[RMDB]
RNA sequence: GGGAACGACUCGAGUAGAGUCGAAAAUUUAAAAAACUCAUGAAACAAGCGCAAGUGUUUCGAAAACGGGGUCUCGUCGCGGACAGUAGCACUGUCACCGCCGACAAUUACAUGGGCAUGGUGCGCAUGAUUAGCGAUCAGUUCAACUUGCCCGCCGUGCGUACAGAGUUUUCGAACUCUGUACGCAAAAAGAAACAACAACAACAAC
Reactivity to 2A3 in 0.01 (KOAc 150mM, MgCl2 10mM, bicine 150mM(pH8.5), 24C), signal-to-noise 1, nucleotides 027 to 156: u050u030u050a080a040a000a000a000a000c090u140c130a110u190g150a170a070a070c030a060a030g060c040g040c060a030a090g060u040g000u020u050u040c060g010a090a110a000a000c030g010g010g000g010u040c080u040c190g020u010c040g000c000g030g000a010c000a000g040u040a020g050c060a010c210u010g000u050c140a040c120c060g080c060c040g020a000c000a010a020u200u120a120c120a230u180g000g000g030c000a000u000g070g000u040g020c000g000c040a120u020g050a070u020u090a010g040c020g020a000u060c020a010g030u100u000c020a010a040c030u040u020g000c000c000c000g000c040c010g050
Reactivity to DMS in 0.01 (KOAc 150mM, MgCl2 10mM, bicine 150mM(pH8.5), 24C), signal-to-noise 1, nucleotides 027 to 156: u000u000u010a000a000a020a080a020a090c080u010c090a110u000g010a080a100a090c020a120a040g010c060g110c130a080a180g010u000g000u000u010u000c030g050a060a030a090a090c040g030g000g050g000u000c010u000c000g000u000c040g090c000g040g000a050c000a010g070u000a080g000c080a300c000u010g000u000c050a070c100c000g000c050c000g010a010c090a000a080u000u000a080c040a050u000g010g000g050c000a070u000g000g080u000g040c060g000c050a090u000g050a080u000u000a130g000c200g000a120u000c030a120g000u000u000c080a010a030c050u000u000g030c000c050c000g040c000c050g050
Structure probing data (2A3 and DMS) for a 207-nucleotide construct.
For DMS, 1,152 sequencing reads were counted.
Values cover nucleotides 27 to 156.
The RNA was probed in 150 mM KOAc, 10 mM MgCl2 and 150 mM bicine (pH 8.5) at 24 C.
2A3 adducts were read by reverse transcription with SuperScript II with manganese.
It was measured as part of the RMDB library OK3TST.